Chemical mapping of a 207-nucleotide RNA with 2A3 and DMS.

RNA sequence: GGGAACGACUCGAGUAGAGUCGAAAAGUUUAAGAAACACACCUACUAUUGGCGAUUAUCAGUUUAUAGCAUCUGUUAGCAUAUUAGGGUUCAGAAAAGUCUUCCCUUAAUGAGGUGUAAAUGUGUUUGUGUUUCACCUAGUAUUUCCAAAACAUCAGCUAGCAGUAAUGUUCGCAUUACUGCUAGCAAAAGAAACAACAACAACAAC
Reactivity to 2A3 in 0.01 (KOAc 150mM, MgCl2 10mM, bicine 150mM(pH8.5), 24C), signal-to-noise 3, nucleotides 027 to 156: g040u040u070u110a120a050g030a020a030a000c040a000c000a010c050c020u020a010c050u020a090u090u100g060g000c010g060a120u160u050a060u300c070a020g060u020u060u060a160u080a080g030c060a040u030c020u060g040u100u070a070g080c040a030u050a060u130u020a040g060g010g020u140u120c100a040g080a030a140a090a010g040u030c020u200u300c000c000c000u030u040a100a100u060g030a020g020g040u010g010u060a020a070a070u140g060u010g020u020u120u160g010u000g010u030u030u030c020a040c000c000u010a030g020u040a100u050u020u050c020c050a020a070a000a000c030a060u300c100a000
Reactivity to DMS in 0.01 (KOAc 150mM, MgCl2 10mM, bicine 150mM(pH8.5), 24C), signal-to-noise 1, nucleotides 027 to 156: g010u000u010u020a080a140g000a060a070a020c010a050c020a050c060c000u020a210c020u010a050u000u000g060g030c020g000a210u010u000a120u000c090a160g010u010u020u020a060u000a100g030c060a050u010c030u000g060u010u010a070g010c020a080u010a080u000u000a000g030g040g020u000u000c040a060g000a150a070a110a180g000u000c020u000u010c030c000c000u010u000a060a040u000g020a090g020g020u000g030u000a030a090a100u000g000u000g010u000u000u000g050u010g000u000u000u000c020a070c070c030u000a060g010u000a070u000u000u000c010c020a080a090a080a030c080a130u010c060a180
The DMS profile rests on 2,054 reads. The reactions ran in a buffer of 150 mM KOAc, 10 mM MgCl2 and 150 mM bicine (pH 8.5), at 24 C.